[RMDB]
RNA sequence: GGGAACGACUCGAGUAGAGUCGAAAACUGCAUAUGCCAAUAGUGUCUUUAACAUUUUGCAGGCGACAACUGCUAAUGUCAGUGCACUUAUGGGUGCUAAUGGCAACAAGAUUGUUGACAAAGAAGUAGACCAGGCACUUCGGUGCCUGGAAAAGAAACAACAACAACAAC
Reactivity to 2A3 in 0.01 (KOAc 150mM, MgCl2 10mM, bicine 150mM(pH8.5), 24C), signal-to-noise 2, nucleotides 027 to 129: c000u020g020c020a070u050a000u180g100c000c010a040a030u020a010g040u000g020u010c020u000u090u130a080a000c000a020u000u000u000u110g030c020a010g000g000c030g000a010c010a030a000c000u010g000c030u010a000a000u000g000u020c000a000g030u000g090c000a000c000u050u060a000u110g070g010g010u030g000c000u100a180a000u150g100g000c000a000a000c030a050a120g060a190u090u090g070u000u010g020a090c060a050a010a000g050a020a050g100u040a000g040a020
Reactivity to DMS in 0.01 (KOAc 150mM, MgCl2 10mM, bicine 150mM(pH8.5), 24C), signal-to-noise 2, nucleotides 027 to 129: c030u000g040c220a080u040a040u180g000c000c010a130a060u000a090g030u030g000u020c000u040u020u000a270a130c000a020u000u000u000u000g060c070a140g000g020c140g140a060c260a080a070c070u040g000c070u010a040a020u030g040u050c120a040g010u020g030c100a020c030u040u000a090u050g000g040g000u000g010c070u000a060a000u090g080g030c000a020a010c000a130a100g010a190u020u020g000u040u050g030a160c100a030a200a070g020a010a090g000u050a070g040a070
Chemical mapping of a 170-nucleotide RNA with 2A3 and DMS.
The DMS profile rests on 2,372 reads.
It was measured as part of the RMDB library 15KLIB.
For DMS the reverse transcriptase was MarathonRT.
For 2A3, 1,873 sequencing reads were counted.